[RMDB]
Structure probing data (2A3) for a 177-nucleotide construct.
The 2A3 profile rests on 790 reads.
It was measured as part of the RMDB library OK1LIB.
RNA sequence: GGGAACGACUCGAGUAGAGUCGAAAAGCAUGCUUCCUUUUGACCAUCUUGCAUGCGAAACGUCCGCUGAUGGUCAGCAUGUGACGAGUUCGCUCGUCAUUUCAUGCAUUUGCGGACGGAAAAGGAAGGGAUGCAUCCACUUCGGUGGAUGCAUCCCAAAAGAAACAACAACAACAAC
Reactivity to 2A3 in 0.01 (KOAc 150mM, MgCl2 10mM, bicine 150mM(pH8.5), 24C), signal-to-noise 2, nucleotides 027 to 126: g030c070a060u010g030c000u040u140c000c000u050u020u120u170g110a080c000c050a060u170c080u180u250g050c020a000u040g000c000g000a050a060a000c000g000u020c000c000g000c010u000g030a000u050g040g060u090c000a000g000c160a000u020g010u030g000a000c000g000a000g000u160u050c300g100c090u000c010g000u000c000a000u000u000u070c070a060u030g010c000a000u010u000u000g010c000g000g000a000c000g000g050a000a080a000a010g030g000a010a110